[RMDB]
Structure probing data (2A3 and DMS) for a 177-nucleotide construct. DMS (dimethyl sulfate) methylates the pairing face of unpaired adenines and cytosines. Source: RMDB library OK2TRN, as collected in RNAgym.
RNA sequence: GGGAACGACUCGAGUAGAGUCGAAAAAUGGUACCAUGCCAUGUAGAGACUCGAUCCGAUCAUCACAGCUAGUAUCCAUGUCUAGUGCUCAGAUCGAUCACGAUCAUGGUACAUGAUCAUGGAUCGAACAGGGGGAUGCUUUCGAGCAUCCCCCUGUAAAAGAAACAACAACAACAAC
Reactivity to 2A3 in 0.01 (KOAc 150mM, MgCl2 10mM, bicine 150mM(pH8.5), 24C), signal-to-noise 1, nucleotides 027 to 126: a020u010g000g000u060a230c120c030a070u270g000c020c000a010u030g060u050a070g050a000g010a110c000u000c090g010a020u060c000c000g010a000u030c010a010u020c010a080c040a090g120c080u070a040g070u090a100u050c000c010a000u040g000u000c030u010a090g000u000g030c020u050c050a070g000a080u010c000g060a110u210c100a040c180g010a000u050c020a140u000g030g000u010a010c010a050u060g010a000u060c010a010u080g000g000a010u000c000g030a050
Reactivity to DMS in 0.01 (KOAc 150mM, MgCl2 10mM, bicine 150mM(pH8.5), 24C), signal-to-noise 2, nucleotides 027 to 126: a030u000g010g030u000a090c180c280a080u020g030c000c000a040u000g000u010a110g000a300g000a030c030u000c000g000a080u000c030c010g010a030u000c020a050u000c050a030c060a180g020c070u000a080g020u000a070u010c070c020a030u000g030u000c010u040a250g000u000g000c050u000c120a060g030a030u010c040g020a070u010c270a100c020g000a040u000c010a060u000g000g000u000a030c000a080u000g000a030u010c010a100u000g040g000a020u000c000g000a060